[RMDB]
This 177-nucleotide RNA was probed chemically with 2A3. 2A3 adducts were read by reverse transcription with SuperScript II with manganese. It was measured as part of the RMDB library RFM100. For 2A3, 588 sequencing reads were counted. Values are in units of 0.01, from 0 to 300, in steps of 10.

RNA sequence: GGGAACGACUCGAGUAGAGUCGAAAACCAUAAACUAUGCCGACUAGGGAUCGGGCGAUGUUAUUAUUUUGACUCGCUCGGCACCUUACGAGAAAUCAAAGUCUUUGGGUUCUGGGGGGAGUAUGGUGCACGUAUAGGGGUUCGCCCCUAUACGUGCAAAAGAAACAACAACAACAAC
Reactivity to 2A3 in 0.01 (KOAc 150mM, MgCl2 10mM, bicine 150mM(pH8.5), 24C), signal-to-noise 2, nucleotides 027 to 126: c000c000a040u120a000a030a040c090u040a000u070g110c050c070g110a160c100u080a000g020g020g030a070u100c000g000g000g000c000g000a020u280g110u000u020a050u080u040a130u080u250u060u050g010a000c000u000c000g010c000u000c000g010g020c010a080c000c000u010u020a000c070g000a020g010a100a050a050u170c090a000a020a120g170u090c050u030u160u130g060g000g000u080u080c020u020g000g000g060g010g000g050a020g030u010a130u110g100g040u080